Annotation
Chemical mapping of a 177-nucleotide RNA with DMS and 2A3. It was measured as part of the RMDB library TTRDEL. For DMS, 3,358 sequencing reads were counted. Conditions: 150 mM KOAc, 10 mM MgCl2 and 150 mM bicine (pH 8.5), 24 C.
[RMDB]
RNA sequence: GGGAACGACUCGAGUAGAGUCGAAAAGAUAUGGACAUGGGACAUGCUUUAGGGUCGGAAACGACCCGAAGAGCAACAGCCCAGUCCUAAGUCAAAAGUGCAUUAUCUCUUCGGAGAUAAUGCACAAGAUUGUUCUUGUGUUCGCACAAGAACAAUCAAAAGAAACAACAACAACAAC
Reactivity to DMS in 0.01 (KOAc 150mM, MgCl2 10mM, bicine 150mM(pH8.5), 24C), signal-to-noise 4, nucleotides 027 to 126: g000a080u000a300u010g000g010a010c010a070u000g010g000g000a040c070a180u010g000c010u000u000u000a300g000g000g010u000c000g000g000a080a100a200c000g010a010c000c000c000g000a060a140g000a020g010c000a030a060c220a100g000c000c000c000a020g000u000c010c000u010a030a100g000u000c040a050a050a150a110g010u000g010c000a000u000u000a010u000c000u000c000u010u010c180g020g010a010g000a010u000a000a000u000g010c000a000c010a030a020
Reactivity to 2A3 in 0.01 (KOAc 150mM, MgCl2 10mM, bicine 150mM(pH8.5), 24C), signal-to-noise 2, nucleotides 027 to 126: g020a010u060a060u140g030g000a040c290a300u010g010g020g020a040c060a170u050g020c000u300u300u050a060g000g010g000u010c000g010g010a060a070a070c000g000a000c010c000c000g000a000a000g000a000g000c000a020a020c040a040g060c000c000c000a000g010u000c000c000u000a080a010g030u010c030a000a050a000a170g000u010g020c000a000u000u000a010u010c000u010c000u060u150c300g060g000a000g000a000u000a000a010u010g040c000a000c010a010a000